Annotation: Conditions: 150 mM KOAc, 10 mM MgCl2 and 150 mM bicine (pH 8.5), 24 C. This 177-nucleotide RNA was probed chemically with DMS and 2A3. The data come from the RNA Mapping Database (RMDB), library OK2TRN. For 2A3 the reverse transcriptase was SuperScript II with manganese. The 2A3 profile rests on 929 reads. DMS adducts were read by reverse transcription with MarathonRT. Reactivities are given for positions 27 through 126. The DMS profile rests on 965 reads.
[RMDB]
RNA sequence: GGGAACGACUCGAGUAGAGUCGAAAAAGUUGGCAAAUUAGCCGGGCAUCACUGGUUCCGCCAAAUAUAUGAAUCGGCGGAUGGUCGUGGGUCAUAAUGAAUAGCCCCGUGGCGUUAUCAUCAGCCCGCUAGUUCCGAUAUUCGUAUCGGAACUAGCAAAAGAAACAACAACAACAAC
Reactivity to DMS in 0.01 (KOAc 150mM, MgCl2 10mM, bicine 150mM(pH8.5), 24C), signal-to-noise 2, nucleotides 027 to 126: a070g020u000u000g020g020c070a060a120a140u000u020a140g050c000c000g000g000g020c050a080u010c060a070c040u020g020g010u000u000c020c050g010c020c010a030a090a060u020a110u010a180u010g000a060a050u020c200g020g030c010g000g000a010u000g010g010u000c100g030u020g020g000g030u000c080a060u000a130a170u020g010a060a100u020a150g000c130c010c040c120g020u020g000g020c020g010u000u000a030u010c020a040u010c080a060g010c010c020c120
Reactivity to 2A3 in 0.01 (KOAc 150mM, MgCl2 10mM, bicine 150mM(pH8.5), 24C), signal-to-noise 2, nucleotides 027 to 126: a030g090u040u050g030g000c060a090a040a220u230u080a070g010c050c030g000g030g000c010a060u060c020a020c090u040g140g000u110u000c030c020g020c000c000a000a070a000u280a020u060a020u200g180a240a110u100c050g010g010c010g000g030a000u010g030g040u060c070g030u040g010g000g030u000c030a000u060a210a070u160g140a040a110u090a130g030c000c000c020c000g000u040g030g000c040g030u120u070a050u120c030a000u000c010a000g050c000c060c000